[RMDB]
RNA sequence: GGGAACGACUCGAGUAGAGUCGAAAAACGAGAAAGAAGUAGGAGAACAACCAACCUCAUAGGGAAAAUAAAUAUUUCAGAAAGCAGAAGAUAAUUCCUCAAAAUAUUAACCAGUGUCUUCAGAGGAAUGAAGGUCUGAGGCCUAUAAUGAAAAGGAAAAUGAUCAUUUAUUCGUAAAUGAUCAUUUAAAAGAAACAACAACAACAAC
Reactivity to DMS in 0.01 (KOAc 150mM, MgCl2 10mM, bicine 150mM(pH8.5), 24C), signal-to-noise 2, nucleotides 027 to 156: a090c060g040a110g010a070a070a110g000a100a070g030u000a060g040g000a090g020a080a060c050a110a100c010c020a080a090c000c020u000c020a000u000a110g000g000g030a130a190a030a150u000a060a060a130u000a090u010u020u000c030a060g010a090a080a130g010c020a040g010a200a070g000a070u000a110a130u000u000c010c000u000c050a070a030a030a070u010a010u010u000a020a080c070c060a090g020u010g000u000c060u000u000c080a150g000a070g000g010a050a060u000g000a120a060g020g020u010c020u000g000a080g020g020c060c030u000a060u010a050a080u020g010a030a020a050a090g000g000a070
Reactivity to 2A3 in 0.01 (KOAc 150mM, MgCl2 10mM, bicine 150mM(pH8.5), 24C), signal-to-noise 2, nucleotides 027 to 156: a010c030g000a020g030a000a070a000g030a110a030g000u120a040g010g020a020g040a070a000c010a020a050c040c020a050a040c030c000u050c040a060u140a040g050g000g050a020a090a000a000u150a020a090a020u120a060u040u160u050c000a000g070a070a030a000g020c010a000g000a040a000g000a080u070a020a030u060u010c000c000u030c010a040a090a030a030u220a050u200u120a010a030c030c000a050g050u050g000u090c090u090u070c080a030g000a000g010g020a010a010u030g020a070a000g000g000u000c000u040g010a050g020g020c010c000u070a080u020a120a110u060g060a030a070a020a000g010g000a030
Source: RMDB library OK3TST, as collected in RNAgym. Structure probing data (DMS and 2A3) for a 207-nucleotide construct. High 2A3 reactivity points to a flexible backbone, as in loops and unpaired stretches. The RNA was probed in 150 mM KOAc, 10 mM MgCl2 and 150 mM bicine (pH 8.5) at 24 C.